[RMDB]
Structure probing data (DMS and 2A3) for a 177-nucleotide construct. For 2A3, 2,244 sequencing reads were counted.
RNA sequence: GGGAACGACUCGAGUAGAGUCGAAAAUACCAAUGGUUCGCCAUUGGUACUUGUAUUGACGAAUACUACCGUAGAAGUAUUCAGGUCACAUAACUACGGAUAUACACUAGAGUUUCGACUCUAGUAACACCGUAAAAGCUUUCGAGCUUUUACGGUGAAAAGAAACAACAACAACAAC
Reactivity to DMS in 0.01 (KOAc 150mM, MgCl2 10mM, bicine 150mM(pH8.5), 24C), signal-to-noise 2, nucleotides 027 to 126: u010a000c000c000a010a030u000g000g030u010u010c280g010c040c000a000u000u040g000g010u000a000c060u000u000g020u010a170u000u000g020a090c110g000a010a000u010a000c000u000a120c020c070g010u000a010g010a220a020g010u000a000u000u000c070a100g020g000u000c050a040c230a070u010a100a090c040u000a030c030g000g010a300u010a120u000a100c190a050c010u000a000g020a000g000u000u000u000c250g010a010c000u010c020u010a010g020u010a030a130
Reactivity to 2A3 in 0.01 (KOAc 150mM, MgCl2 10mM, bicine 150mM(pH8.5), 24C), signal-to-noise 3, nucleotides 027 to 126: u030a000c000c000a010a010u030g020g030u050u040c250g060c080c000a000u000u000g000g000u000a020c000u040u160g120u140a230u100u150g030a020c030g020a000a010u010a020c000u070a260c000c030g010u030a010g020a090a000g000u000a020u020u030c020a040g050g160u090c100a060c020a270u160a190a080c030u050a000c020g020g020a040u060a020u010a200c100a000c020u000a000g000a000g010u000u020u110c170g090a020c010u010c020u000a000g000u000a010a000
The RNA was probed in 150 mM KOAc, 10 mM MgCl2 and 150 mM bicine (pH 8.5) at 24 C. It was measured as part of the RMDB library M2PK50. For 2A3 the reverse transcriptase was SuperScript II with manganese. High DMS reactivity at an A or C suggests that its Watson-Crick edge is free.